[RMDB]
RNA sequence: GGGAACGACUCGAGUAGAGUCGAAAACUCUUCCUAGGUCCGGAAUCAACCUCCAUCCGAUCUGUCCGGAGCUUUUUCGGCGGAGGAGCUCCCUCCCCGUCCUUCCCUUUUCUUAUUAUUCCGAGGAACCCGCUAGACUUCGGUCUAGCGAAAAGAAACAACAACAACAAC
Reactivity to DMS in 0.01 (KOAc 150mM, MgCl2 10mM, bicine 150mM(pH8.5), 24C), signal-to-noise 5, nucleotides 027 to 129: c040u020c030u020u030c010c030u000a000g060g040u050c070c080g030g000a050a090u060c160a100a180c100c020u000c010c030a100u020c070c040g040a000u030c070u050g060u070c080c020g020g010a090g030c130u010u010u000u010u010c050g030g080c260g040g010a070g010g000a070g000c080u000c050c030c020u010c000c000c000c000g040u020c060c050u000u000c000c020c030u050u020u020u020c040u070u020a090u000u070a000u020u060c020c030g000a000g030g010a010a000c080c030
Reactivity to 2A3 in 0.01 (KOAc 150mM, MgCl2 10mM, bicine 150mM(pH8.5), 24C), signal-to-noise 8, nucleotides 027 to 129: c010u010c010u030u020c010c000u010a030g020g090u030c030c010g010g030a030a060u100c040a060a090c010c010u020c010c000a090u070c030c030g050a100u050c040u090g150u050c030c040g020g020a030g010c020u060u030u020u020u080c010g020g000c050g020g010a020g000g000a020g010c040u030c020c000c000u020c010c000c000c000g040u020c000c010u010u050c000c000c000u030u100u050u060c050u050u070a190u120u060a110u130u050c040c030g020a010g020g060a060a060c020c010